This 177-nucleotide RNA was probed chemically with 2A3 and DMS. The reactions ran in a buffer of 150 mM KOAc, 10 mM MgCl2 and 150 mM bicine (pH 8.5), at 24 C. High DMS reactivity at an A or C suggests that its Watson-Crick edge is free. The 2A3 profile rests on 5,836 reads. For 2A3 the reverse transcriptase was SuperScript II with manganese.
RNA sequence: GGGAACGACUCGAGUAGAGUCGAAAAAGGUCCAAGCCAACGGUGUCGUGCUUAUCCAUCGCCUGAGCGACUGCCAGCUUGGUACCAACACCGUCGGUGGAAGCCGCUAACACCGGUUCGCGGUAGCGCAGUGGGCUAUAUUCGUAUAGCCCACUGCAAAAGAAACAACAACAACAAC
Reactivity to 2A3 in 0.01 (KOAc 150mM, MgCl2 10mM, bicine 150mM(pH8.5), 24C), signal-to-noise 6, nucleotides 027 to 126: a000g060g010u020c040c020a020a000g000c000c020a120a040c080g000g000u050g020u040c060g030u080g050c040u100u090a110u150c030c020a070u100c090g050c080c070u060g020a060g050c030g070a130c090u160g030c020c000a010g010c020u010u010g010g000u030a020c010c000a000a010c020a010c010c010g090u110c010g030g010u030g020g040a090a020g020c000c020g030c060u050a070a020c020a070c040c070g110g040u090u070c090g000c010g050g050u060a050g140c030
Reactivity to DMS in 0.01 (KOAc 150mM, MgCl2 10mM, bicine 150mM(pH8.5), 24C), signal-to-noise 2, nucleotides 027 to 126: a020g000g000u000c000c000a080a100g020c010c020a100a150c140g000g000u000g000u000c040g010u010g020c090u010u000a070u010c050c040a060u030c130g000c130c070u010g000a190g000c000g010a060c060u020g000c010c010a090g000c010u000u020g010g020u000a030c000c020a080a030c090a090c020c010g010u010c030g010g010u000g010g020a150a150g000c050c000g000c110u040a070a090c030a160c090c020g010g010u010u010c100g000c120g000g000u000a020g030c210